[RMDB]
RNA sequence: GGGAACGACUCGAGUAGAGUCGAAAACUACUACUUGUGUAGCAAGACUUUCAAGCUUUAGAAAAAUUACAUAUAUGUCUGUCUUUCUACACAUUUGUUGAUUAACCUAAGUGUAGUAGAUCAGUAACUUCCAACUCACUUCUUGUCUUAUAAGUAGUGCAUUUGCAUAUUUCGAUAUGCAAAUGCAAAAAGAAACAACAACAACAAC
Reactivity to DMS in 0.01 (KOAc 150mM, MgCl2 10mM, bicine 150mM(pH8.5), 24C), signal-to-noise 2, nucleotides 027 to 156: c020u000a140c010u000a020c040u010u000g030u000g000u000a010g000c060a020a050g000a060c020u000u000u000c030a100a120g010c080u000u010u000a170g010a050a080a140a140a150u010u010a110c060a160u000a150u000a180u000g020u020c030u020g000u000c000u000u010u000c000u000a020c020a030c010a040u010u000u000g020u000u000g010a180u000u020a070a110c040c040u000a040a100g020u000g030u000a040g000u000a040g010a110u020c060a100g010u000a060a080c060u000u000c030c020a110a080c020u000c020a060c030u000u000c050u000u000g010u000c070u000u010a100u010a030a070g030u000a060g010
Reactivity to 2A3 in 0.01 (KOAc 150mM, MgCl2 10mM, bicine 150mM(pH8.5), 24C), signal-to-noise 7, nucleotides 027 to 156: c020u030a010c000u010a010c010u010u040g000u000g000u010a000g000c020a010a000g020a020c010u020u040u020c080a100a070g090c080u180u220u230a150g130a060a160a040a080a070u290u260a120c040a040u250a010u100a080u220g010u020c010u010g000u000c000u010u020u010c000u000a000c000a010c010a000u030u020u040g030u020u040g070a190u090u120a050a040c020c030u040a110a060g030u020g010u070a020g000u030a010g010a090u130c040a040g090u080a050a080c050u070u040c040c030a050a060c040u060c090a060c030u070u040c010u060u110g070u060c030u060u200a160u060a230a050g070u120a030g040